[RMDB]
RNA sequence: GGGAACGACUCGAGUAGAGUCGAAAAGAUGCUUUCUUCGGAAAGCAUCAAAUAAAGAAUCGCGCAGACGGUUAAGAAAAAGCGCCAAAAACCGUCAAUAAAAAACAGUGUCGUUCGCGACACUGAACAUACUUUGCUUCUUCGGAAGCAAAGUAUGAAAAGAAACAACAACAACAAC
Reactivity to 2A3 in 0.01 (KOAc 150mM, MgCl2 10mM, bicine 150mM(pH8.5), 24C), signal-to-noise 2, nucleotides 027 to 126: g010a000u000g000c000u000u000u000c020u030u020c140g040g020a000a010a000g010c000a000u020c000a000a000a000u010a000a030a010g060a050a100u090c040g000c000g010c020a010g010a000c010g020g060u030u020a090a020g150a130a070a020a020a020g020c010g050c050c030a110a260a010a030a040c010c000g000u000c010a010a010u230a030a050a010a010a000a000c010a000g010u000g000u020c020g020u030u050c200g060c000g060a000c000a000c000u000g000a020a000
Reactivity to DMS in 0.01 (KOAc 150mM, MgCl2 10mM, bicine 150mM(pH8.5), 24C), signal-to-noise 2, nucleotides 027 to 126: g010a020u000g010c010u000u010u010c000u000u010c150g010g010a010a010a020g000c000a000u010c010a040a040a130u000a030a090a100g000a120a070u010c160g000c000g020c140a160g020a010c000g010g000u020u010a060a140g010a070a120a040a100a070g020c030g000c020c080a040a040a070a030a020c010c000g000u010c010a130a110u040a010a050a050a120a160a160c030a010g000u000g020u000c000g020u000u000c230g030c000g010a010c010a010c010u000g010a040a080